[RMDB]
RNA sequence: GGGAACGACUCGAGUAGAGUCGAAAAAGAAAGCAAGGCGAAGGGAAGCCACCACCGCGGGAGCUGUUCGUUGUACGAGAGCUCAGCUUUUACCUUCCCAAACCGCGGAAAGGGAAAACCCAAAAAACACACAUAUAGUCUUCGGACUAUAUGUGUGAAAAGAAACAACAACAACAAC
Reactivity to 2A3 in 0.01 (KOAc 150mM, MgCl2 10mM, bicine 150mM(pH8.5), 24C), signal-to-noise 2, nucleotides 027 to 126: a000g020a020a010a000g010c030a050a110g010g020c010g100a100a110g010g000g010a060a000g000c020c000a020c000c000a030c010c000g010c000g020g030g000a010g000c010u020g070u120u010c020g020u050u290g170u260a040c010g000a000g010a000g050c000u000c000a000g000c010u000u000u000u020a040c000c020u030u000c020c010c000a030a020a050c010c010g000c020g000g050a070a030a060g030g010g000a050a030a010a020c030c000c000a130a030a000a000a020a010
Reactivity to DMS in 0.01 (KOAc 150mM, MgCl2 10mM, bicine 150mM(pH8.5), 24C), signal-to-noise 3, nucleotides 027 to 126: a080g000a030a000a040g000c020a290a100g010g010c010g000a140a090g010g000g000a210a080g000c010c000a090c020c020a050c010c000g010c010g010g000g000a010g000c010u000g010u000u000c010g000u000u020g010u000a240c020g030a040g010a040g010c000u000c000a130g010c000u010u000u000u010a080c160c130u010u000c000c000c000a030a090a100c000c020g040c010g020g000a010a070a020g000g000g000a070a030a070a230c020c010c040a020a040a070a080a070a120

An RNA of 177 nucleotides, treated with 2A3 and DMS and read out base by base. 2A3 adducts were read by reverse transcription with SuperScript II with manganese. Reactivities are rounded to 0.1 and cut off at 0 and 3. The reactions ran in a buffer of 150 mM KOAc, 10 mM MgCl2 and 150 mM bicine (pH 8.5), at 24 C.